This 207-nucleotide RNA was probed chemically with DMS and 2A3. The data come from the RNA Mapping Database (RMDB), library RNAMAK. Values cover nucleotides 27 to 156. The 2A3 profile rests on 6,560 reads. For 2A3 the reverse transcriptase was SuperScript II with manganese. High DMS reactivity at an A or C suggests that its Watson-Crick edge is free.

[RMDB]
RNA sequence: GGGAACGACUCGAGUAGAGUCGAAAAGCGUACUACUACGCGAACAGGAUCUUGGAUUUAUGGUUCUCUAGCGUGUACCUUGUUGCUGAUUUCCCAAAUAGGAAAUCAGCAACAAGGUAUCGGGACCAUUGUCAGAUCCUGGGAGCGUAGUAUCGCACUUUAGGUCAAUCUUCGGAUUGACCUAAAGAAAAGAAACAACAACAACAAC
Reactivity to DMS in 0.01 (KOAc 150mM, MgCl2 10mM, bicine 150mM(pH8.5), 24C), signal-to-noise 1, nucleotides 027 to 156: g000c010g130u000a060c120u000a050c000u000a010c000g000c000g000a300a300c010a040g000g000a020u000c010u000u000g020g000a010u000u000u000a000u000g020g050u000u000c010u000c020u000a220g020c130g020u000g020u000a000c010c000u000u000g000u000u000g030c010u020g000a020u000u010u010c000c000c010a050a130a220u010a030g010g000a010a010a030u000c010a040g000c000a010a000c000a010a000g010g000u000a000u000c010g010g030g040a040c010c000a010u000u000g030u000c020a040g000a000u000c010c000u010g020g020g000a300g000c020g000u000a010g010u000a000u000c040g000c070a140
Reactivity to 2A3 in 0.01 (KOAc 150mM, MgCl2 10mM, bicine 150mM(pH8.5), 24C), signal-to-noise 6, nucleotides 027 to 156: g020c010g030u080a080c060u000a000c000u000a000c020g000c010g000a020a010c000a000g000g000a000u040c030u120u300g130g020a080u260u300u170a020u070g040g040u140u030c110u040c110u180a080g190c070g150u210g020u090a000c000c000u010u010g000u000u000g000c000u000g010a010u000u000u020c040c030c010a120a230a120u300a040g000g000a000a010a000u000c000a000g000c010a000a000c000a000a000g000g000u000a000u000c000g000g000g010a000c010c000a000u000u000g000u000c000a000g000a000u000c000c000u000g000g000g000a000g000c010g010u000a000g000u000a000u010c000g000c000a030